[RMDB]
RNA sequence: GGGAACGACUCGAGUAGAGUCGAAAAUCCCAACCAAACCAACCAUAUCCAAAAUAAAAUAAAAAUAAAAAUAAAAACAGUGUCUUCGGACGCUGAAAAGAAACAACAACAACAAC
Reactivity to 2A3 in 0.01 (KOAc 150mM, MgCl2 10mM, bicine 150mM(pH8.5), 24C), signal-to-noise 3, nucleotides 027 to 095: u030c010c010c000a010a010c040c020a070a010a050c010c030a020a030c020c000a110u070a060u160c020c010a150a080a030a040u160a110a120a110a020u280a090a140a130a110a010u300a110a110a070a040a000u300a080a060a030a030a000c010a000g000u000g000u000c000u020u060c170g070g000a000c010g020c000u000g040a060